[RMDB]
RNA sequence: GGGAACGACUCGAGUAGAGUCGAAAAGCACUAAUCCCAUGAUGAGAGUUCACCCUCAUGACCUCAUCUAAACCUGAUUGUCUCCCAAAGGUCCAUUUCCAAAUACCAUCACAUUAGAGGUUAAGGGUUCAACAUCUGAAUUUGACAGGGACACAGAAUACUGAUCAUUAUUCGUAAUGAUCAGUAUAAAAGAAACAACAACAACAAC
Reactivity to DMS in 0.01 (KOAc 150mM, MgCl2 10mM, bicine 150mM(pH8.5), 24C), signal-to-noise 7, nucleotides 027 to 156: g030c070a160c080u000a120a160u000c000c000c000a120u000g000a060u010g010a050g010a110g020u000u000c070a090c040c040c050u000c060a100u010g010a030c040c000u000c010a030u000c020u000a070a080a050c050c020u000g010a120u000u000g010u000c050u000c020c010c020a050a120a160g010g030u000c020c030a130u000u000u000c070c040a050a080a160u000a100c030c030a120u000c040a070c080a140u000u000a060g010a070g000g010u000u000a070a090g010g020g000u000u000c040a050a050c050a050u010c030u000g010a080a150u000u010u000g020a080c060a080g010g020g010a150c080a080c080a120g010a140
Reactivity to 2A3 in 0.01 (KOAc 150mM, MgCl2 10mM, bicine 150mM(pH8.5), 24C), signal-to-noise 9, nucleotides 027 to 156: g100c040a010c130u130a090a060u030c010c020c020a020u060g010a010u000g000a000g010a010g040u140u090c030a060c040c030c020u110c040a040u100g010a010c010c000u000c010a020u000c000u060a040a070a050c010c020u050g060a170u140u090g050u020c050u020c050c030c000a060a090a030g080g000u010c030c010a040u050u040u060c020c020a040a040a070u110a070c020c020a090u080c040a050c020a140u120u180a060g010a020g070g000u020u050a040a070g030g020g000u040u060c040a050a060c010a090u050c060u110g050a110a080u070u050u080g040a030c030a040g010g010g020a010c010a000c000a060g080a040